[RMDB]
RNA sequence: GGGAACGACUCGAGUAGAGUCGAAAAAUACUACUGUUGACAUUUGACCAAGUAUGAGACGCAUUGCAAGACUUGGUGCCCAAGUUUCAUGGGGCUUAUGCAUAGCUCUUGCUAAAGUGUAGCCAAACACUGGUAAUGCUUUCGAGCAUUACCAGUGAAAAGAAACAACAACAACAAC
Reactivity to DMS in 0.01 (KOAc 150mM, MgCl2 10mM, bicine 150mM(pH8.5), 24C), signal-to-noise 3, nucleotides 027 to 126: a040u060a070c090u000a090c120u030g000u000u030g000a110c200a180u000u010u010g000a050c000c010a030a020g000u000a050u020g000a100g000a090c110g040c090a170u010u020g010c110a050a060g010a050c030u010u020g000g000u000g020c020c010c000a120a090g000u010u020u000c070a060u080g010g020g010g000c030u020u010a010u010g000c040a120u010a040g010c050u020c100u010u010g020c000u020a050a110a090g080u000g030u000a040g000c060c080a110a060a190
Reactivity to 2A3 in 0.01 (KOAc 150mM, MgCl2 10mM, bicine 150mM(pH8.5), 24C), signal-to-noise 4, nucleotides 027 to 126: a000u170a030c030u040a010c050u050g030u100u020g130a090c080a240u070u030u260g070a020c030c000a060a000g070u020a080u220g130a110g010a070c040g020c170a150u070u280g000c020a050a030g000a010c010u020u030g050g010u050g010c000c010c000a030a100g040u020u050u090c140a140u110g080g030g010g000c020u060u100a100u140g060c020a020u030a040g000c000u020c010u090u170g010c000u060a080a090a070g010u030g020u050a030g000c010c000a020a020a040
The record gives the reactivity of an RNA of 177 nucleotides to DMS and 2A3. The RNA was probed in 150 mM KOAc, 10 mM MgCl2 and 150 mM bicine (pH 8.5) at 24 C. For DMS, 3,658 sequencing reads were counted. For 2A3, 2,281 sequencing reads were counted. The data come from the RNA Mapping Database (RMDB), library OK1LIB.